[RMDB]
RNA sequence: GGGAACGACUCGAGUAGAGUCGAAAAGAUAUGGAAUUGGAGCCUUGGAUUUAGAACCCACAUCGGAAACGAUGUGGUCCCUUGUCAGGCUCACAAUUCCUAAGUCAAAGGUUGGUUCGCCAACCAAGUAACAGCUGACGUUCGCGUCAGCUGUUACAAAAGAAACAACAACAACAAC
Reactivity to 2A3 in 0.01 (KOAc 150mM, MgCl2 10mM, bicine 150mM(pH8.5), 24C), signal-to-noise 1, nucleotides 027 to 126: g040a020u120a020u190g010g000a000a030u030u000g010g000a000g010c030c010u130u150g140g020a100u300u300u150a080g010a040a020c000c010c000a020c000a000u000c010g050g000a070a030a040c010g010a000u000g010u000g010g040u140c000c000c030u000u030g060u120c030a010g000g000c010u000c000a040c000a020a010u020u000c000c000u010a090a000g040u000c020a160a090a000g040g020u010u010g050g000u080u080c210g040c090c010a010a000c000c020a000a020
Reactivity to DMS in 0.01 (KOAc 150mM, MgCl2 10mM, bicine 150mM(pH8.5), 24C), signal-to-noise 1, nucleotides 027 to 126: g000a060u080a300u000g000g010a000a030u000u000g010g000a010g030c000c010u010u040g020g000a060u000u000u020a030g000a010a080c200c010c000a000c000a000u000c000g000g000a090a030a150c000g000a010u000g000u000g010g010u000c030c060c030u000u000g000u000c040a050g010g000c000u000c000a020c020a000a030u000u000c000c000u000a030a030g000u000c050a190a120a100g010g030u000u010g040g030u000u000c260g100c010c010a030a000c000c020a040a040